[RMDB]
RNA sequence: GGGAACGACUCGAGUAGAGUCGAAAAAGAAAUAGCGAUAAUCGUAAGAGAAAUGUCCUUCACAUAGCGCUACGCACAGAACUAUUAGUAGCGCAAUAGCUUUUGAAGGACAUUACCUGCCAAAAAAGAGAUAGCAAGGAUUCGUCCUUGCUAUCUCAAAAGAAACAACAACAACAAC
Reactivity to 2A3 in 0.01 (KOAc 150mM, MgCl2 10mM, bicine 150mM(pH8.5), 24C), signal-to-noise 2, nucleotides 027 to 126: a050g120a000a030a030u170a060g070c040g070a040u160a120a110u230c020g030u050a080a030g040a000g050a060a080a000u000g010u010c010c000u010u070c010a030c000a030u150a040g000c010g040c000u030a010c000g050c050a090c030a120g230a290a020c090u100a150u300u120a050g000u000a000g020c000g040c010a010a000u010a000g000c000u100u080u060u170g000a000a000g020g020a000c000a010u000u000a000c020c000u030g010c040c030a070a110a050a020a020a020
Reactivity to DMS in 0.01 (KOAc 150mM, MgCl2 10mM, bicine 150mM(pH8.5), 24C), signal-to-noise 2, nucleotides 027 to 126: a150g000a120a090a130u000a070g010c050g010a200u000a070a120u010c040g020u030a080a080g010a120g000a020a040a000u000g000u000c020c000u000u000c000a050c170a080u010a100g000c010g010c020u000a010c010g010c300a120c300a130g000a060a130c160u000a120u010u010a100g010u000a000g020c000g000c020a040a040u010a100g010c250u010u000u000u020g000a010a010g000g000a000c000a000u000u000a080c070c030u000g030c040c070a010a040a050a030a080a110
An RNA of 177 nucleotides, treated with 2A3 and DMS and read out base by base. Values cover nucleotides 27 to 126. The data come from the RNA Mapping Database (RMDB), library M2PK90. The RNA was probed in 150 mM KOAc, 10 mM MgCl2 and 150 mM bicine (pH 8.5) at 24 C. The DMS profile rests on 1,163 reads.